[RMDB]
RNA sequence: GGGAACGACUCGAGUAGAGUCGAAAAUUCUGGAAUUGUUACGCUAUGCGGAAUAAAAGUUUUUGAAGCAAACAAUGUUGAUUCAAAAGCUUACCAAAAAGCACGAGAAUCUAUUGGAGCAUUGUUACAUGCUAUUACCAUUCGUGGUAAUAGCAUGAAAAGAAACAACAACAACAAC
Reactivity to 2A3 in 0.01 (KOAc 150mM, MgCl2 10mM, bicine 150mM(pH8.5), 24C), signal-to-noise 3, nucleotides 027 to 126: u040u000c020u060g050g070a140a060u100u090g030u030u100a030c050g000c020u070a030u280g050c030g010g030a030a020u090a090a160a050a030g030u030u010u020u070u150g080a060a010g030c080a050a020a050c010a050a060u090g030u090u050g050a030u000u000c000a010a000a000a070g000c000u010u040a080c030c010a020a100a030a020a000g010c010a010c050g060a060g040a020a030u000c020u060a150u110u300g070g080a060g020c000a030u010u030g030u010u050a030
Reactivity to DMS in 0.01 (KOAc 150mM, MgCl2 10mM, bicine 150mM(pH8.5), 24C), signal-to-noise 6, nucleotides 027 to 126: u000u010c030u010g010g010a150a150u000u000g010u000u000a070c060g020c030u000a090u010g010c130g010g010a050a080u010a050a090a120a080g010u000u000u000u010u020g010a110a050g000c140a110a040a070c060a030a040u000g000u000u000g000a030u000u000c000a010a070a100a030g010c000u000u000a110c100c170a040a090a060a050a020g010c020a070c070g000a300g000a020a010u000c020u010a120u000u000g020g010a130g010c040a040u000u000g010u000u000a170